[RMDB]
RNA sequence: GGGAACGACUCGAGUAGAGUCGAAAAUGGCUUCUCCUGGGCGAUCGCUCGCUGUUUUUGUGGCUGGCUUUCAGCGGGCUGGAGGAGCCGGGAGCGGAGGCGGAGGACCGAGCCAAAAGCGUCAGCCUAUAGAGGAAGCUGUUCGCAGCUUCCUCAAGUACUGUGCAACAUUCGUGUUGCACAGUACAAAAGAAACAACAACAACAAC
Reactivity to 2A3 in 0.01 (KOAc 150mM, MgCl2 10mM, bicine 150mM(pH8.5), 24C), signal-to-noise 1, nucleotides 027 to 156: u100g010g000c010u010u000c000u020c010c000u060g050g050g040c020g090a080u080c060g020c000u000c000g020c010u010g040u010u070u000u020u080g040u010g010g000c000u010g030g000c000u010u040u040c000a000g000c000g030g000g000c020u020g050g020a060g010g020a010g010c010c000g000g020g000a040g000c060g000g060a050g010g040c070g020g070a060g030g040a060c020c050g020a010g020c030c020a060a040a030a010g020c030g110u100c010a000g000c000c000u070a100u090a110g000a000g000g000a000a000g000c000u000g050u050u110c230g000c110a000g020c010u010u000c000c000u000c000a000a000
An RNA of 207 nucleotides, treated with 2A3 and read out base by base.
The reactions ran in a buffer of 150 mM KOAc, 10 mM MgCl2 and 150 mM bicine (pH 8.5), at 24 C.